The record gives the reactivity of an RNA of 177 nucleotides to DMS and 2A3. Reactivities are given for positions 27 through 126. Reactivities are rounded to 0.1 and cut off at 0 and 3. The RNA was probed in 150 mM KOAc, 10 mM MgCl2 and 150 mM bicine (pH 8.5) at 24 C. DMS (dimethyl sulfate) methylates the pairing face of unpaired adenines and cytosines. 2A3 adducts were read by reverse transcription with SuperScript II with manganese.
RNA sequence: GGGAACGACUCGAGUAGAGUCGAAAACAGUGAUGGAAACAUCACUGAAAAACGUGUGAGCGCUACACGAAAAAGUCGAUCGAAUACCGAUCGACAAGCGCUAAAGUCAUGCCGAAAGGCAUGACAACCCAUAGGUCCUCUUCGGAGGACCUAUGGGAAAAGAAACAACAACAACAAC
Reactivity to DMS in 0.01 (KOAc 150mM, MgCl2 10mM, bicine 150mM(pH8.5), 24C), signal-to-noise 2, nucleotides 027 to 126: c050a010g020u000g020a010u000g040g000a160a180a270c000a000u030c020a000c000u000g010a060a070a060a300a170c020g040u020g010u000g020a020g000c000g000c000u000a300c000a000c030g010a020a030a020a030a080g010u000c000g000a030u050c000g000a230a110u020a130c300c000g000a010u000c000g010a000c000a040a000g000c000g000c020u010a040a030a160g010u000c000a000u000g030c000c000g020a030a030a150g010g050c020a000u000g020a000c010a050a050
Reactivity to 2A3 in 0.01 (KOAc 150mM, MgCl2 10mM, bicine 150mM(pH8.5), 24C), signal-to-noise 4, nucleotides 027 to 126: c010a000g000u010g010a000u000g030g020a040a050a020c000a000u010c000a000c000u000g000a040a000a000a010a000c010g000u000g000u000g090a020g000c000g010c010u010a010c010a000c020g250a220a020a040a000a000g000u000c000g010a000u000c000g010a040a040u120a300c150c000g010a000u000c000g010a000c000a000a000g000c010g000c010u010a020a000a000g000u000c000a000u000g000c000c000g110a110a020a010g010g000c000a000u000g000a000c000a000a020